[RMDB]
The record gives the reactivity of an RNA of 177 nucleotides to DMS and 2A3.
RNA sequence: GGGAACGACUCGAGUAGAGUCGAAAACAGUGAUGGAAACAUCACUGAAAAACGUGAAAGCGCCUCACGAAAAAGUCGAUCGAAUACCGAUCGACAAGCGCUAAAGUCAUGCCGAAAGGCAUGACAACGUCAUGCAUUAUUUCGAUAAUGCAUGACGAAAAGAAACAACAACAACAAC
Reactivity to DMS in 0.01 (KOAc 150mM, MgCl2 10mM, bicine 150mM(pH8.5), 24C), signal-to-noise 4, nucleotides 027 to 126: c000a000g000u000g010a020u010g000g010a170a120a200c010a000u010c000a000c010u000g000a030a080a040a120a190c010g000u000g000a030a060a050g000c000g000c010c300u010c010a000c000g010a030a020a030a020a040g020u000c000g000a000u000c000g010a220a170u030a130c240c010g000a030u000c000g000a000c000a020a050g000c000g010c010u030a120a030a080g000u000c000a010u000g000c000c000g000a060a080a220g000g030c010a000u010g010a000c020a020a050
Reactivity to 2A3 in 0.01 (KOAc 150mM, MgCl2 10mM, bicine 150mM(pH8.5), 24C), signal-to-noise 6, nucleotides 027 to 126: c000a000g000u000g000a000u000g000g020a030a020a020c000a000u000c000a000c000u000g000a020a000a000a000a010c000g000u000g010a050a060a010g000c000g000c030c030u030c010a010c080g210a100a010a010a000a000g000u000c000g000a000u010c000g010a030a060u140a300c110c000g000a000u000c000g000a000c000a000a000g000c000g000c000u040a070a020a000g000u000c000a000u000g000c000c000g050a090a030a000g000g000c000a000u000g000a000c000a000a010